The record gives the reactivity of an RNA of 177 nucleotides to DMS and 2A3.
[RMDB]
RNA sequence: GGGAACGACUCGAGUAGAGUCGAAAAACAAACAGCAACACGCGCAGUCACGCAGGCAGAUGGAAUAAUCUGCCAAGAAUAACUAAUGGACGGUAGACUGCGCGAACCACCGACCAAUAGAAAAAAAGUAUCUUUCACAGUUCGCUGUGAAAGAUACAAAAGAAACAACAACAACAAC
Reactivity to DMS in 0.01 (KOAc 150mM, MgCl2 10mM, bicine 150mM(pH8.5), 24C), signal-to-noise 1, nucleotides 027 to 126: a090c070a160a140a160c090a110g000c040a070a040c130a170c010g030c000g010c000a000g040u010c000a100c220g000c170a120g000g000c000a030g000a000u000g060g000a270a010u000a220a030u000c000u020g010c000c000a000a090g000a180a010u000a020a060c090u010a050a110u010g010g020a180c090g030g030u000a060g010a040c000u000g000c010g010c000g010a030a000c050c160a040c040c030g010a070c070c030a030a040u000a070g010a000a010a060a040a100a020a100
Reactivity to 2A3 in 0.01 (KOAc 150mM, MgCl2 10mM, bicine 150mM(pH8.5), 24C), signal-to-noise 1, nucleotides 027 to 126: a030c060a010a040a000c010a030g030c040a010a070c010a010c070g020c000g000c010a000g000u000c000a000c090g130c080a070g020g000c000a000g010a000u040g060g070a120a050u230a130a070u040c000u000g000c000c000a010a010g020a020a030u250a070a030c040u070a070a080u100g020g040a020c020g000g000u050a070g020a000c000u000g010c000g000c000g000a000a010c010c000a010c010c000g000a020c000c020a060a090u080a130g120a100a030a010a010a000a010a040

About this RNA:
The 2A3 profile rests on 1,682 reads. 2A3 adducts were read by reverse transcription with SuperScript II with manganese.